[RMDB]
RNA sequence: GGGAACGACUCGAGUAGAGUCGAAAAAUCUUCCUCGCGAUCUUUCUCUCGAAAUUUACCAAUCAAUUGCUUCUGUCGCUACUGGAAGCGGUGAUCCGCACAGUGACGACUUUACAGCAAUUGCUUACUUAAGGGACGAAUUGCUCACAAAGCAUCCGUUUGACGAAAAGUUCGCUUUUCGUCAAACAAAAGAAACAACAACAACAAC
Reactivity to 2A3 in 0.01 (KOAc 150mM, MgCl2 10mM, bicine 150mM(pH8.5), 24C), signal-to-noise 5, nucleotides 027 to 156: a000u020c020u060u030c010c010u000c040g050c020g070a090u020c030u030u090u010c030u020c000u000c030g110a120a160a160u180u170u120a170c050c040a070a040u230c000a000a000u010u010g000c000u010u050c020u080g000u000c000g010c010u030a020c000u020g060g060a300a070g030c040g000g000u190g090a160u120c020c000g000c000a020c000a010g000u010g010a000c010g000a000c000u050u030u020a050c030a000g000c000a000a000u010u010g000c010u050u040a050c010u060u120a070a110g010g000g020a010c030g060a080a080u080u090g000c020u010c030a100c030a060a100a030g030c010a060u060c060c050
Reactivity to DMS in 0.01 (KOAc 150mM, MgCl2 10mM, bicine 150mM(pH8.5), 24C), signal-to-noise 1, nucleotides 027 to 156: a070u020c010u000u000c010c010u000c070g040c060g020a110u000c020u000u000u000c000u000c010u000c030g000a120a050a060u010u000u000a080c020c040a040a110u010c030a010a030u000u000g010c000u000u000c030u000g090u000c000g020c010u000a030c000u000g010g000a140a170g050c000g020g030u000g010a050u000c000c000g020c040a140c020a040g010u000g040a040c000g000a030c000u000u020u000a060c170a030g030c000a030a020u000u000g000c160u000u000a060c040u000u000a170a160g040g010g000a120c060g010a070a050u000u000g020c040u020c070a110c080a070a090a080g010c060a060u020c050c060